[RMDB]
RNA sequence: GGGAACGACUCGAGUAGAGUCGAAAAAGCGCAGUAUGAAGUCUUUGUUUUCUUCCGAAAACAAGCUCAAUGAGAGCCAUCGGGGGUAGAUCUAUCUCAUGACGAGUGGUGGAAUACUUUGACUCAUGAGAGAGAAGCUGAGGCGAAGGCGUCUACCGACGAGCCUCACGUUCGCGUGAGGCUCGUCAAAAGAAACAACAACAACAAC
Reactivity to 2A3 in 0.01 (KOAc 150mM, MgCl2 10mM, bicine 150mM(pH8.5), 24C), signal-to-noise 2, nucleotides 027 to 156: a070g080c060g000c030a020g020u100a090u140g070a120a040g050u020c060u010u050u040g030u000u000u030u050c010u110u060c040c050g000a040a070a060a070c100a090a030g000c010u010c010a070a260u300g030a070g000a000g100c090c000a010u040c030g030g000g010g000g000u000a010g000a070u000c000u050a040u020c020u020c020a000u020g010a000c000g010a010g020u030g030g100u120g020g190a120a010u120a070c020u060u110u160g020a000c010u010c000a010u030g000a030g010a000g000a000g010a000a010g000c050u040g060a000g020g050c070g000a020a010g020g030c040g010u020c020u040a020c080c000
Notes
Chemical mapping of a 207-nucleotide RNA with 2A3. It was measured as part of the RMDB library PDB130. The RNA was probed in 150 mM KOAc, 10 mM MgCl2 and 150 mM bicine (pH 8.5) at 24 C. Values cover nucleotides 27 to 156.